[RMDB]
RNA sequence: GGGAACGACUCGAGUAGAGUCGAAAAGUAACGGAAGCUGUAUCAUAUCCGGUGUCAGCAACUUUAAUUAUUGGCUUAAUGAUAUUACUUUUAGGAUUUAGCCCGGUUCAAAAUUUAGGGGAGAAGCAAAAGUGUCGUGUUUCGACACGACACUUUUAAAAGAAACAACAACAACAAC
Reactivity to DMS in 0.01 (KOAc 150mM, MgCl2 10mM, bicine 150mM(pH8.5), 24C), signal-to-noise 2, nucleotides 027 to 126: g010u000a060a050c120g000g010a080a200g000c020u000g040u010a050u000c040a050u020a090u040c100c140g010g000u010g020u020c040a040g000c070a000a100c090u000u030u080a070a070u010u020a120u020u000g000g000c110u020u040a010a010u040g010a030u010a090u010u000a060c020u030u000u000u000a120g010g000a050u020u030u000a130g010c000c010c020g000g000u020u030c030a040a080a040a140u000u020u020a030g020g000g000g010a070g010a130a080g010c250
Reactivity to 2A3 in 0.01 (KOAc 150mM, MgCl2 10mM, bicine 150mM(pH8.5), 24C), signal-to-noise 2, nucleotides 027 to 126: g000u090a160a000c080g050g040a060a020g000c070u000g050u150a120u130c010a020u020a170u230c060c070g010g000u030g030u010c030a020g000c030a110a050c020u120u100u300a100a030u060u210a040u070u130g030g000c010u000u080a010a000u140g020a000u080a040u170u030a220c110u070u020u060u120a160g090g020a110u200u000u000a030g040c010c000c000g020g000u000u010c100a270a300a260a070u270u190u100a040g010g010g000g000a050g030a070a050g020c070